RNA sequence: GGGAACGACUCGAGUAGAGUCGAAAACCUGUUGACUUCGGUCAACAGGAAAAGGUCGAUGCUACGCUACCGAAGUAGCAAAAGUGCAGAAGGAACGCACAAAAACUUAUCCGUUCGCGGAUAAGAACUGACAUACUCUGUUCGCAGAGUAUGUCAGAAAAGAAACAACAACAACAAC
Reactivity to DMS in 0.01 (KOAc 150mM, MgCl2 10mM, bicine 150mM(pH8.5), 24C), signal-to-noise 2, nucleotides 027 to 126: c000c010u000g000u000u000g000a010c000u000u010c160g020g000u010c010a000a020c000a010g010g000a000a050a080a050g050g010u000c070g000a230u030g010c000u010a010c020g010c110u020a130c060c060g000a110a130g000u020a000g000c020a030a090a060a070g020u000g030c020a110g020a130a080g020g020a110a130c130g000c010a020c070a110a040a060a090a140c010u000u000a000u000c000c000g000u000u000c240g080c030g010g000a010u000a020a000g000a170a130
Reactivity to 2A3 in 0.01 (KOAc 150mM, MgCl2 10mM, bicine 150mM(pH8.5), 24C), signal-to-noise 3, nucleotides 027 to 126: c000c000u000g000u000u010g010a010c020u020u040c240g100g000u010c000a000a000c000a010g010g050a010a100a010a010g050g020u100c050g080a070u060g000c010u010a000c020g000c050u060a030c010c040g120a100a020g010u010a000g000c000a010a010a010a030g020u020g000c010a020g070a250a080g170g070a140a020c080g030c020a000c010a010a010a020a030a040c000u000u000a000u010c040c010g000u020u050c280g020c020g090g000a010u000a000a000g000a020a030

Description
Structure probing data (DMS and 2A3) for a 177-nucleotide construct. 2A3 adducts were read by reverse transcription with SuperScript II with manganese. Values are in units of 0.01, from 0 to 300, in steps of 10.